The record gives the reactivity of an RNA of 177 nucleotides to DMS and 2A3. It was measured as part of the RMDB library M2PK50. 2A3 is a SHAPE reagent: it acylates the 2'-hydroxyl of flexible nucleotides of all four kinds. The DMS profile rests on 2,304 reads. For 2A3, 4,329 sequencing reads were counted.

RNA sequence: GGGAACGACUCGAGUAGAGUCGAAAAUCGCUAAGCUUCGGCUUAGCGAAAAGUCGCGGCUUGAGGGCGUGUACGGCUGCGCACACACACGACCCUCAACCCAAAGCAUCGUGUUCGCACGAUGCAAGUAAAGAUCACACUUCGGUGUGAUCUUUACAAAAGAAACAACAACAACAAC
Reactivity to DMS in 0.01 (KOAc 150mM, MgCl2 10mM, bicine 150mM(pH8.5), 24C), signal-to-noise 2, nucleotides 027 to 126: u010c000g000c000u000a000a010g010c000u000u010c160g020g000c000u010u000a000g020c020g010a010a020a050a100g020u000c060g020c190g000g020c200u000u000g010a020g000g010g000c010g010u010g000u000a070c140g000g000c050u020g000c160g010c060a030c030a090c110a040c000a010c010g000a140c000c000c010u000c010a000a040c030c000c050a070a120a110g010c000a000u000c010g030u000g000u010u000c200g010c010a000c010g000a010u000g020c000a020a060
Reactivity to 2A3 in 0.01 (KOAc 150mM, MgCl2 10mM, bicine 150mM(pH8.5), 24C), signal-to-noise 3, nucleotides 027 to 126: u030c000g000c000u010a010a010g000c010u020u160c260g090g000c000u010u030a000g020c000g010a000a000a000a000g020u030c040g030c150g050g010c080u000u020g000a000g010g020g010c020g000u010g020u020a040c080g040g000c050u170g060c100g050c030a040c000a000c000a000c000a020c040g300a300c000c000c000u000c000a000a000c010c000c010a070a100a020g000c000a000u000c000g000u010g030u060u100c250g000c110a000c000g000a000u000g000c000a010a000